Source: RMDB library OK2TST, as collected in RNAgym. The record gives the reactivity of an RNA of 177 nucleotides to DMS. The DMS profile rests on 692 reads. Values cover nucleotides 27 to 126.

[RMDB]
RNA sequence: GGGAACGACUCGAGUAGAGUCGAAAACGAUGAGCUUACUGUGGUAAGUGAUUCGGGUUAUUGAACGUAGCCAACGCACGGGCAGCUUGAAGUGUGACGGAUAUACCGGCUUACAAAAUCUGACGGACGAUUUAUUGGGCUUCGGCCCAAUAAAUCGAAAAGAAACAACAACAACAAC
Reactivity to DMS in 0.01 (KOAc 150mM, MgCl2 10mM, bicine 150mM(pH8.5), 24C), signal-to-noise 1, nucleotides 027 to 126: c020g000a010u000g010a300g010c000u000u000a000c000u030g030u040g100g000u000a000a010g030u000g000a210u000u000c010g030g020g020u030u000a100u010u010g010a090a100c160g010u000a030g000c000c000a030a100c080g040c190a110c000g000g020g070c000a030g000c040u000u000g000a090a090g010u000g070u000g000a040c040g000g000a120u000a090u020a170c030c000g020g000c030u000u000a070c100a010a210a060a140u010c060u010g020a130c100g000g010a250